[RMDB]
RNA sequence: GGGAACGACUCGAGUAGAGUCGAAAAGUGGUCGAGUGCGAAGCACUGGGGUAGAGAAAUAAAUAGAAAGAGACCUUCCCCGUCAGUCAGUCACUCUCUGUCUGAAUCUCUCUCUCAAAGACCACGACAUGGAUAUCCGAUUCGUCGGAUAUCCAUGAAAAGAAACAACAACAACAAC
Reactivity to 2A3 in 0.01 (KOAc 150mM, MgCl2 10mM, bicine 150mM(pH8.5), 24C), signal-to-noise 7, nucleotides 027 to 126: g010u010g000g000u000c010g030a030g020u010g030c130g220a210a050g000c010a010c010u010g000g010g020g040u160a010g020a000g060a040a110a030u210a060a090a040u190a070g150a050a140a000g080a010g030a030c000c000u030u010c010c010c000c000g050u050c010a030g020u010c010a000g020u030c030a040c100u050c010u010c010u040g040u020c010u020g060a130a100u040c010u000c000u000c000u010c000u010c050a110a050a010g000a000c000c000a000c000g000a000
Reactivity to DMS in 0.01 (KOAc 150mM, MgCl2 10mM, bicine 150mM(pH8.5), 24C), signal-to-noise 5, nucleotides 027 to 126: g030u000g010g020u000c000g000a030g030u000g010c000g010a150a120g020c010a010c000u010g000g010g010g010u020a010g000a010g020a030a070a100u060a050a080a110u030a070g010a060a060a040g000a050g000a050c070c100u000u010c010c000c000c040g000u030c060a080g010u010c100a080g010u000c110a120c080u000c040u010c010u000g000u000c020u010g000a110a110u010c020u000c000u000c000u000c000u000c070a070a070a090g000a010c000c000a010c000g000a140